[RMDB]
RNA sequence: GGGAACGACUCGAGUAGAGUCGAAAAUCUUAUCCAAAGAAGAAGGGUUAGAAUGUACCGUGUUUUACGGAAGUUCCAUUCCCGUAGGGUUACAAUGUGUUGCUAGAAUAAACCGUAAGUCAUAGUAUUGCAAAUCAGCGUUCGCGCUGAUUUGCAAAAAAGAAACAACAACAACAAC
Reactivity to DMS in 0.01 (KOAc 150mM, MgCl2 10mM, bicine 150mM(pH8.5), 24C), signal-to-noise 1, nucleotides 027 to 126: u000c120u030u000a040u000c100c050a220a070a120g010a060a270g010a050a060g000g000g000u040u000a050g140a000a020u000g000u000a300c000c000g000u000g000u000u030u100u060a000c010g000g000a060a300g000u000u000c000c040a300u000u000c000c000c010g000u000a300g000g010g000u020u020a100c230a120a080u000g000u000g040u000u000g030c000u020a040g000a040a000u130a080a180a060c210c060g000u050a030a000g000u000c080a210u060a050g000u000a030